[RMDB]
RNA sequence: GGGAACGACUCGAGUAGAGUCGAAAAGAUAUGGACCUCCUUUUGACGAGGCUACAUUCGGAAACGAAUGGUCCUCGAUAAGGAAGGUCCUAAGUCAAAGCAGCUUCCCGUUCGCGGGAAGCUGCAACAGUGUGUUCAUGUUCGCAUGAACACACUGAAAAGAAACAACAACAACAAC
Reactivity to 2A3 in 0.01 (KOAc 150mM, MgCl2 10mM, bicine 150mM(pH8.5), 24C), signal-to-noise 2, nucleotides 027 to 126: g020a010u070a040u130g000g000a000c000c000u000c010c010u040u050u080u170g270a190c080g010a000g000g030c050u190a140c030a020u000u010c000g020g050a010a080a090c010g000a020a000u020g030g070u150c000c010u000c020g040a030u000a040a000g030g080a030a190g010g000u030c010c000u000a030a010g030u000c050a140a020a040g000c000a000g000c000u010u000c000c000c030g030u060u080c300g030c000g000g000g000a000a000g000c020u010g000c030a000a000
Reactivity to DMS in 0.01 (KOAc 150mM, MgCl2 10mM, bicine 150mM(pH8.5), 24C), signal-to-noise 3, nucleotides 027 to 126: g000a070u000a300u000g000g000a020c000c000u000c000c000u000u010u000u010g010a210c170g000a020g000g000c110u000a060c010a000u000u000c000g000g000a110a070a250c000g000a000a000u000g010g000u010c020c000u000c000g010a090u000a000a000g020g010a040a030g020g000u000c000c010u000a000a080g010u000c050a070a070a170g000c000a000g000c000u000u000c010c000c000g030u000u000c170g010c010g030g000g010a040a000g000c000u000g000c000a000a040